[RMDB]
RNA sequence: GGGAACGACUCGAGUAGAGUCGAAAAACGUGCGAGUACGCUCGCACGAGCCCGCGUGUGGAGCCAGGUGUAGAGGCGGAGCACAGCUGGCUCUAAUUUGAGGGGCAGAGUGCGUACGCGCACUCAAAUAAUCCGGUAAGUUCGCUUACCGGAUUAUAAAAGAAACAACAACAACAAC
Reactivity to 2A3 in 0.01 (KOAc 150mM, MgCl2 10mM, bicine 150mM(pH8.5), 24C), signal-to-noise 9, nucleotides 027 to 126: a000c010g000u000g000c000g000a000g010u040a040c230g030c080u000c000g010c010a000c000g000a010g000c000c000c000g110c050g040u150g040u080g030g000a000g000c000c000a030g070g060u010g010u060a070g020a080g090g090c090g030g030a040g010c020a000c000a020g130c010u000g000g000c000u000c000u000a050a080u070u100u150g090a100g010g010g020g000c040a030g000a000g010u010g000c010g010u020a030c170g000c000g000c080a000c000u000c000a020a030
Reactivity to DMS in 0.01 (KOAc 150mM, MgCl2 10mM, bicine 150mM(pH8.5), 24C), signal-to-noise 7, nucleotides 027 to 126: a110c020g010u000g010c000g000a020g010u020a080c260g030c000u000c010g010c000a010c020g010a060g010c010c000c010g000c090g010u030g000u020g000g010a020g000c000c000a020g000g000u000g010u000a100g010a110g010g000c040g000g000a100g010c110a040c010a030g010c010u000g000g000c000u000c000u000a010a040u020u020u020g020a130g000g010g000g010c070a130g000a030g010u000g010c010g030u010a120c180g030c010g010c000a010c000u000c010a030a080
Chemical mapping of a 177-nucleotide RNA with 2A3 and DMS. It was measured as part of the RMDB libraries RFM100 and RFMREP. Values cover nucleotides 27 to 126. The reactions ran in a buffer of 150 mM KOAc, 10 mM MgCl2 and 150 mM bicine (pH 8.5), at 24 C. For 2A3 the reverse transcriptase was SuperScript II with manganese. For DMS the reverse transcriptase was MarathonRT.